[RMDB]
Structure probing data (DMS and 2A3) for a 207-nucleotide construct. For DMS the reverse transcriptase was MarathonRT. Values cover nucleotides 27 to 156. The 2A3 profile rests on 575 reads. For DMS, 1,979 sequencing reads were counted.

RNA sequence: GGGAACGACUCGAGUAGAGUCGAAAAUAACGCUCUAAAUGUACUCAAGAAAGCAGGUGCGCUAUGAGUGGGGCAAAGUUUACAAAGGGGCCGUGGGAGUGGGUUAAGUCCAAAAACGACAAUUGGUCAUCUUAUGACCUUUCGCCCGGUAUCCUCAUAAAGUGAAUAUAUUCGUAUAUUCACUUUAAAAAGAAACAACAACAACAAC
Reactivity to DMS in 0.01 (KOAc 150mM, MgCl2 10mM, bicine 150mM(pH8.5), 24C), signal-to-noise 1, nucleotides 027 to 156: u000a020a080c050g030c040u000c050u000a050a160a070u000g000u000a070c070u010c070a140a150g000a070a110a090g000c030a060g010g020u000g000c020g010c060u010a030u000g020a090g060u020g040g040g000g010c060a050a040a120g060u010u000u010a180c030a040a080a140g000g020g040g040c040c070g040u010g030g010g010a170g020u000g000g000g010u000u030a040a050g010u010c020c010a020a050a080a050a090c000g000a050c020a070a050u000u000g030g010u010c010a080u000c270u000u000a100u010g010a020c000c000u000u000u000c040g030c010c010c020g040g030u010a090u000c000c020u000c020a240
Reactivity to 2A3 in 0.01 (KOAc 150mM, MgCl2 10mM, bicine 150mM(pH8.5), 24C), signal-to-noise 1, nucleotides 027 to 156: u110a080a000c030g020c010u080c010u050a000a000a120u080g010u080a050c020u030c110a080a130g030a240a210a030g090c060a020g100g000u060g000c030g000c000u030a090u090g010a000g040u050g030g000g000g000c000a140a000a000g000u070u130u030a060c080a030a100a020g050g070g000g020c030c020g100u080g000g050g010a120g030u150g050g000g010u080u100a080a070g040u060c050c000a040a120a070a000a000c030g090a030c030a030a060u010u040g000g000u000c000a000u030c120u010u300a080u100g000a010c000c000u000u060u090c100g040c010c000c000g000g010u050a080u080c000c000u010c000a000
Source: RMDB library OK3TST, as collected in RNAgym. The reactions ran in a buffer of 150 mM KOAc, 10 mM MgCl2 and 150 mM bicine (pH 8.5), at 24 C.